About this RNA:
Source: RMDB library ARCHII, as collected in RNAgym. Structure probing data (2A3) for a 207-nucleotide construct. The reactions ran in a buffer of 150 mM KOAc, 10 mM MgCl2 and 150 mM bicine (pH 8.5), at 24 C. For 2A3 the reverse transcriptase was SuperScript II with manganese.

[RMDB]
RNA sequence: GGGAACGACUCGAGUAGAGUCGAAAAAGCAAUGGAGAUGAUUCUUGAGGGAAGCAAUUCUGCAGAGACAUCUCCACCCUGGGGUGGCGUCGCCAGAAUACACCGACCCGUUACAGGGAAAUUGGCUACUUGGCUGGACAACUACGUCUCUCUUCUUAUCUGUGAAAAGGUUCGCCUUUUCACAGAUAAAAGAAACAACAACAACAAC
Reactivity to 2A3 in 0.01 (KOAc 150mM, MgCl2 10mM, bicine 150mM(pH8.5), 24C), signal-to-noise 1, nucleotides 027 to 156: a000g120c070a050a060u100g010g010a010g000a030u000g030a130u090u070c030u010u030g040a220g040g000g010a040a030g050c050a050a300u040u060c030u120g060c040a020g020a000g000a010c000a000u010c000u000c000c000a010c000c000c000u030g000g000g040g000u050g010g010c030g040u050c010g030c010c010a020g100a050a130u120a060c080a020c010c030g100a070c020c000c000g050u130u110a090c070a060g000g000g000a030a050a110u150u080g020g000c010u080a090c030u150u170g030g000c000u010g010g030a030c030a040a020c140u130a050c070g040u000c050u020c000u000c000u130u040c010u030u000